This 207-nucleotide RNA was probed chemically with 2A3. Conditions: 150 mM KOAc, 10 mM MgCl2 and 150 mM bicine (pH 8.5), 24 C. For 2A3, 656 sequencing reads were counted. Source: RMDB library M2RFPK, as collected in RNAgym.
[RMDB]
RNA sequence: GGGAACGACUCGAGUAGAGUCGAAAAAACAAACAUCAAAUCGCAUAGCAAAGAGUCAAAAAAAGAGAGAGCUUUGCGAGACCUACCAAGGGUGAAGAGAUACCAUCCAAGGAGCUGAAGAGAAAUCGAGAGCUCACGGCGUUCGCGCCGUGAGCAACGCUAAUUCAUGGUUCGCCAUGAAUUAGCGAAAAGAAACAACAACAACAAC
Reactivity to 2A3 in 0.01 (KOAc 150mM, MgCl2 10mM, bicine 150mM(pH8.5), 24C), signal-to-noise 1, nucleotides 027 to 156: a010a040c110a040a050a000c030a070u120c010a030a000a100u050c030g000c020a010u030a020g000c020a020a180a090g090a100g090u160c110a110a140a060a070a010a130a000g040a020g010a000g010a000g000c000u060u030u030g000c000g000a000g000a020c020c000u030a080c030c030a050a080g030g010g010u020g000a040a060g040a020g010a070u100a160c000c010a040u000c010c030a020a040g030g000a000g010c090u050g060a090a020g030a080g050a050a140a000u120c070g040a030g010a020g240c000u010c000a000c000g020g070c000g010u070u100c160g000c010g000c010c000g010u000g000a000g040c010a000a010